[RMDB]
The record gives the reactivity of an RNA of 207 nucleotides to 2A3 and DMS.
Source: RMDB library OK3TST, as collected in RNAgym.
DMS adducts were read by reverse transcription with MarathonRT.
Conditions: 150 mM KOAc, 10 mM MgCl2 and 150 mM bicine (pH 8.5), 24 C.
RNA sequence: GGGAACGACUCGAGUAGAGUCGAAAACGAAGGCUUCGACGAGACCGUCAAGGAGCUGCUUGAGCAACGUGAGGACUACGCGGCGAACCUGAGAGCCGCCUCUGACGCGGAAGACAUCGAUCCGCUGCUCGCAGAGAUCCACAAGGUUCGGCACCAAACGCGUUAGUUUAUUCGUAAACUAACGCGUAAAAGAAACAACAACAACAAC
Reactivity to 2A3 in 0.01 (KOAc 150mM, MgCl2 10mM, bicine 150mM(pH8.5), 24C), signal-to-noise 3, nucleotides 027 to 156: c060g030a090a030g050g040c050u050u090c050g040a070c030g020a050g100a130c040c040g040u070c040a070a130g000g000a050g000c020u020g000c020u090u200g020a010g010c010a020a110c060g090u100g010a050g010g060a030c080u070a040c300g010c000g030g000c010g010a070a100c010c080u150g020a040g000a000g080c000c020g000c020c000u020c000u020g040a030c040g000c010g010g020a020a010g090a080c040a170u120c150g110a100u000c010c000g010c010u040g010c030u010c040g000c000a010g000a000g020a070u040c030c000a050c020a040a010g040g000u020u060c000g000g000c010a030c060c030a210a060
Reactivity to DMS in 0.01 (KOAc 150mM, MgCl2 10mM, bicine 150mM(pH8.5), 24C), signal-to-noise 2, nucleotides 027 to 156: c100g040a080a100g020g040c060u010u000c030g000a200c020g020a180g020a090c020c020g000u010c070a190a170g000g010a110g010c010u000g030c060u000u020g000a060g020c060a070a140c060g020u020g000a120g020g020a180c060u000a110c130g030c000g020g030c020g010a040a040c050c020u010g000a170g000a220g000c000c000g030c020c020u000c020u020g020a260c080g000c020g020g020a120a090g000a110c080a140u000c070g000a140u000c000c020g000c010u010g000c080u000c040g000c000a080g000a150g000a100u000c000c040a080c050a070a040g010g010u000u000c000g020g000c100a030c000c040a000a190
2A3 adducts were read by reverse transcription with SuperScript II with manganese. The 2A3 profile rests on 2,123 reads.